RNA sequence: GGGAACGACUCGAGUAGAGUCGAAAAGAUAUGGACUAGAGAAGCGGCAAUUACUAUUCGGAAACGAACGAAUAAUUGAACUACCGUGGUCUAGUCCUAAGUCAAAAGCUAUACUUCGGUAUAGCAAGUAUAAAUCCUUCUUCGGAAGGAUUUAUACAAAAGAAACAACAACAACAAC
Reactivity to 2A3 in 0.01 (KOAc 150mM, MgCl2 10mM, bicine 150mM(pH8.5), 24C), signal-to-noise 2, nucleotides 027 to 126: g020a000u060a040u080g010g000a010c010u000a000g000a010g000a180a000g030c010g010g010c020a000a010u040u030a030c080u080a050u040u020c000g030g030a070a120a140c040g030a050a030c020g090a140a260u020a030a020u020u040g010a050a030c070u100a050c300c020g040u060g010g070u000c000u010a000g000u000c000c000u000a030a000g010u000c010a000a080a130a100g000c000u000a000u000a020c000u030u090c180g030g000u000a010u000a000g000c010a000a020
Reactivity to DMS in 0.01 (KOAc 150mM, MgCl2 10mM, bicine 150mM(pH8.5), 24C), signal-to-noise 4, nucleotides 027 to 126: g000a050u010a300u010g000g000a020c000u000a010g010a020g030a300a300g010c030g000g000c010a000a010u010u000a030c070u010a230u000u000c010g000g000a080a100a200c110g000a020a050c120g000a040a070u000a000a020u000u000g000a060a030c090u010a290c010c000g020u000g010g020u000c000u000a010g000u000c000c000u000a000a100g000u020c080a070a080a080a100g000c000u000a000u000a000c000u000u020c190g030g010u000a000u000a000g010c010a030a050